Structure probing data (DMS and 2A3) for a 207-nucleotide construct. For DMS, 2,755 sequencing reads were counted. Conditions: 150 mM KOAc, 10 mM MgCl2 and 150 mM bicine (pH 8.5), 24 C. DMS adducts were read by reverse transcription with MarathonRT.
[RMDB]
RNA sequence: GGGAACGACUCGAGUAGAGUCGAAAAGAAGCAAAGGACUCAGAAUUCAUGAUUGAAGAAAUGCAGGGUUUUUAAUGACCACAACAAGCAAGCAUGCAGCUUACUGCUUGAAAGGGUCUUGCCUCACCCAAGCUAGAGUGCAGUGGCCUUUGAAGCAUAAUUUAGUGGGUUUCGACCCACUAAAUUAAAAAGAAACAACAACAACAAC
Reactivity to DMS in 0.01 (KOAc 150mM, MgCl2 10mM, bicine 150mM(pH8.5), 24C), signal-to-noise 2, nucleotides 027 to 156: g020a090a060g070c000a080a040a030g010g000a030c020u000c040a130g000a080a170u000u000c040a110u000g000a150u010u020g010a150a140g010a140a090a040u000g020c060a140g030g020g010u000u000u000u000u000a060a130u000g010a070c020c010a050c030a070a120c010a030a010g050c020a060a040g020c030a110u010g000c070a160g010c030u000u000a030c060u000g010c040u010u000g000a050a070a150g000g060g000u000c000u000u000g030c000c000u000c030a080c020c020c060a110a110g020c080u000a130g020a050g030u010g010c010a040g020u000g000g030c000c010u000u000u000g010a080a100g000c020a240
Reactivity to 2A3 in 0.01 (KOAc 150mM, MgCl2 10mM, bicine 150mM(pH8.5), 24C), signal-to-noise 2, nucleotides 027 to 156: g020a050a000g030c030a060a000a000g060g020a030c010u020c050a020g090a100a110u120u100c050a060u170g150a100u070u150g040a050a050g020a080a100a020u120g030c070a070g050g000g000u030u040u020u070u120a080a100u200g000a020c000c000a030c010a110a010c000a020a030g030c010a000a000g030c010a010u270g020c020a020g030c030u030u060a060c080u090g020c000u010u020g050a050a010a000g000g010g000u000c000u050u020g010c010c000u040c030a070c000c030c000a000a000g000c020u040a050g000a010g070u110g010c020a010g020u040g090g000c010c010u030u020u050g010a010a040g010c010a040